This 207-nucleotide RNA was probed chemically with DMS and 2A3. For 2A3, 1,725 sequencing reads were counted. Reactivities are given for positions 27 through 156. DMS (dimethyl sulfate) methylates the pairing face of unpaired adenines and cytosines.
RNA sequence: GGGAACGACUCGAGUAGAGUCGAAAAAGAAAGAGAUAGUGAUGGUGGACAAAUGGUCUUUUUGAGAAGUUUCACUGAGAAUGGGAUGGGGACGUGCUGAAACCGUGGGUUCAGGGGAGAGUUUUUAAAGAUGAGAGAGCAUGCCUGAGUGCUUGUACAUAAAUACCACGUUCGCGUGGUAUUUAUGAAAAGAAACAACAACAACAAC
Reactivity to DMS in 0.01 (KOAc 150mM, MgCl2 10mM, bicine 150mM(pH8.5), 24C), signal-to-noise 2, nucleotides 027 to 156: a090g000a090a070a090g010a100g030a070u000a060g030u000g030a080u010g010g030u010g000g020a070c080a060a080a070u010g010g000u010c030u000u010u000u000u000g000a080g000a070a070g000u020u000u000c030a110c030u000g020a100g020a160a080u000g000g020g020a100u000g000g010g030g000a030c040g020u000g040c040u010g000a060a070a040c020c060g010u000g000g060g040u000u000c040a080g020g000g030g000a080g000a080g030u000u000u010u000u030a020a010a140g000a090u040g000a130g010a100g020a080g010c010a060u000g000c010c030u000g000a100g010u000g010c030u000u000g010u010a150
Reactivity to 2A3 in 0.01 (KOAc 150mM, MgCl2 10mM, bicine 150mM(pH8.5), 24C), signal-to-noise 3, nucleotides 027 to 156: a010g080a030a030a000g060a000g000a030u070a060g040u040g040a070u090g030g020u040g030g020a020c040a030a100a050u090g040g020u040c040u050u090u040u060u110g100a090g020a070a060g010u020u060u080c030a030c040u050g010a010g040a130a070u090g010g010g040a020u070g030g030g010g000a000c050g010u030g030c020u020g030a060a090a060c020c010g020u070g010g040g020u120u140c050a030g010g010g030g000a020g020a000g030u030u010u030u070u170a050a050a020g070a030u090g020a020g010a010g000a000g040c020a020u060g020c000c020u060g050a040g000u050g000c030u020u040g020u040a020